[RMDB]
RNA sequence: GGGAACGACUCGAGUAGAGUCGAAAAGGUGCAGCGGCGUGCCGGUAGUCGUACACCUGCUGGCUCAGAAGUUGGUGCUGAGGGGUCGGAAAGCCGCGUGUUACCGCGGCCUUUUCCGCGGAAUGAAGCAUCUCGCGAGCUUCGGUUUGCGAGGUGCAAAAGAAACAACAACAACAAC
Reactivity to 2A3 in 0.01 (KOAc 150mM, MgCl2 10mM, bicine 150mM(pH8.5), 24C), signal-to-noise 9, nucleotides 027 to 126: g050g000u060g020c060a040g010c070g030g010c020g060u090g030c010c010g030g010u030a020g020u020c060g020u040a030c020a020c040c000u010g020c030u040g030g010c000u000c030a050g020a150a030g050u070u070g030g020u060g010c010u010g010a030g020g030g020g030u160c010g000g000a020a010a000g000c000c010g000c010g000u070g080u070u150a070c040c000g000c000g000g000c010c020u060u050u030u000c000c000g000c010g020g040a070a100u160g030a090a020
Reactivity to DMS in 0.01 (KOAc 150mM, MgCl2 10mM, bicine 150mM(pH8.5), 24C), signal-to-noise 9, nucleotides 027 to 126: g010g010u000g010c070a090g020c010g010g000c030g010u020g010c040c030g000g010u010a080g010u010c030g010u020a190c070a040c050c010u000g000c090u020g010g010c010u010c030a070g010a090a110g010u010u000g000g010u010g010c020u010g000a080g000g010g000g010u030c010g000g000a030a050a100g000c000c010g010c010g010u010g010u040u040a110c230c000g000c000g000g000c100c040u010u000u010u000c000c010g000c080g010g010a100a080u030g000a150a130
An RNA of 177 nucleotides, treated with 2A3 and DMS and read out base by base. For DMS the reverse transcriptase was MarathonRT. 2A3 is a SHAPE reagent: it acylates the 2'-hydroxyl of flexible nucleotides of all four kinds. The RNA was probed in 150 mM KOAc, 10 mM MgCl2 and 150 mM bicine (pH 8.5) at 24 C. Values cover nucleotides 27 to 126. For 2A3 the reverse transcriptase was SuperScript II with manganese.